[RMDB]
RNA sequence: GGGAACGACUCGAGUAGAGUCGAAAACAGGUGAGUUCGCCAGGUCUAUCAUGUCGUUAUGAGCAUCUUGAAUUCGGAUGCACACAGGGUGCCUACCCGGCGACAGUGCAGUUUUAGCUUCAUCUGCGUGCGUCCGCCCAUUCGUGGGCGGACGCACAAAAGAAACAACAACAACAAC
Reactivity to 2A3 in 0.01 (KOAc 150mM, MgCl2 10mM, bicine 150mM(pH8.5), 24C), signal-to-noise 2, nucleotides 027 to 126: c080a000g060g000u020g030a100g030u030u110c110g000c080c010a000g050g040u040c000u000a080u020c000a140u060g130u080c080g090u120u130a100u230g300a000g030c010a000u020c000u190u210g300a300a280u300u260c090g000g000a000u000g080c000a000c000a000c060a010g060g000g000u080g120c000c000u040a150c000c000c070g000g000c000g010a000c000a000g020u000g000c000a000g110u000u000u090u300a090g020c000u060u000c000a070u000c000u010g050c000